[RMDB]
RNA sequence: GGGAACGACUCGAGUAGAGUCGAAAAGCACCAGGCAGUUUGCCUGUUGACGGUAAGGCACCACGCCUGUACAUGUACCACGACAGCACCCAGCCUGUUGGUUUGGUUGCCGAACGUGUCGACAGCCGUUCAUAGUUGCUUUCGAGCAACUAUGAACAAAAGAAACAACAACAACAAC
Reactivity to DMS in 0.01 (KOAc 150mM, MgCl2 10mM, bicine 150mM(pH8.5), 24C), signal-to-noise 7, nucleotides 027 to 126: g000c060a120c110c010a010g000g010c000a150g020u010u010u000g020c030c010u000g000u000u010g000a070c100g010g010u010a080a070g010g010c000a110c120c160a110c160g000c010c010u000g010u010a060c150a110u000g020u000a110c100c030a040c040g010a100c040a050g000c030a030c060c020c010a060g010c030c010u010g010u000u010g010g010u000u000u000g010g000u000u000g010c010c020g000a120a080c060g010u000g000u000c090g000a050c060a060g010c080c080
Reactivity to 2A3 in 0.01 (KOAc 150mM, MgCl2 10mM, bicine 150mM(pH8.5), 24C), signal-to-noise 5, nucleotides 027 to 126: g030c020a040c050c000a010g030g000c010a110g060u190u280u140g080c000c010u020g000u030u060g060a050c020g020g020u090a040a030g020g000c010a020c050c030a020c120g000c010c020u040g020u050a050c050a100u120g040u050a070c020c000a030c040g030a010c020a000g000c010a020c000c050c000a010g020c010c010u180g080u230u250g070g000u080u110u070g000g000u030u070g030c000c000g050a190a030c040g050u040g040u060c030g020a020c030a030g020c010c040
This 177-nucleotide RNA was probed chemically with DMS and 2A3.
For DMS the reverse transcriptase was MarathonRT.
It was measured as part of the RMDB library OK2TST.